An RNA of 177 nucleotides, treated with 2A3 and read out base by base.
RNA sequence: GGGAACGACUCGAGUAGAGUCGAAAACAACCCUACCGCAUGAACCGAACUUGACAAAAGUGCAGUAGGGGUAAAUUCUCCCGAUUCGGUGCGGAGGAGAAAACAAACAACAAAACAAAAACAAAAAGACGUAGGUACAGUUCGCUGUACCUACGUCAAAAGAAACAACAACAACAAC
Reactivity to 2A3 in 0.01 (KOAc 150mM, MgCl2 10mM, bicine 150mM(pH8.5), 24C), signal-to-noise 2, nucleotides 027 to 126: c000a030a110c000c000c000u000a000c000c000g040c000a010u020g020a020a000c000c000g000a000a030c110u130u170g000a030c030a060a180a040a000g000u000g030c010a010g040u010a000g010g000g000g000u010a020a030a000u040u030c020u010c010c000c010g060a090u010u020c000g000g010u000g040c020g060g000a140g020g040a000g030a040a000a000a000c090a120a220a000c050a050a000c000a020a030a020a000c130a050a140a070a080a020c050a030a160a020a020a000
As a SHAPE reagent, 2A3 marks flexible, mostly unpaired nucleotides at the ribose 2'-OH.
For 2A3 the reverse transcriptase was SuperScript II with manganese.